[RMDB]
RNA sequence: GGGAACGACUCGAGUAGAGUCGAAAACCGGGCGUACACCUGGCUCGAGGGUGACCCGGCGCCCUACACGAUGUUCGGUCCUGAGCUCGCCGAAGUGCUCCGGCCGCGCCGGUCGUGCGUGAUCCUGGCUUGGGAGGAUCAUUCGGGUGUCGACGGGCAGACCGAUUGGAUUCGUCCAAUCGGUCUGAAAAGAAACAACAACAACAAC
Reactivity to 2A3 in 0.01 (KOAc 150mM, MgCl2 10mM, bicine 150mM(pH8.5), 24C), signal-to-noise 1, nucleotides 027 to 156: c000c000g000g000g000c130g080u130a060c010a000c040c030u110g110g050c140u230c010g040a080g020g020g010u030g030a210c030c000c010g000g000c020g020c000c000c010u000a020c040a010c000g020a030u050g070u120u100c050g030g060u090c010c000u000g000a010g010c000u050c100g110c080c050g100a070a000g050u090g090c000u000c020c060g010g000c000c000g060c000g000c010c030g070g080u070c020g080u050g060c010g000u040g000a040u020c000c050u070g030g020c100u030u120g000g040g050a010g020g010a010u000c000a030u000u100c000g000g000g000u030g030u010c030g000a050c020g010g060g040
This 207-nucleotide RNA was probed chemically with 2A3. For 2A3, 682 sequencing reads were counted. It was measured as part of the RMDB library OK3TST. The RNA was probed in 150 mM KOAc, 10 mM MgCl2 and 150 mM bicine (pH 8.5) at 24 C.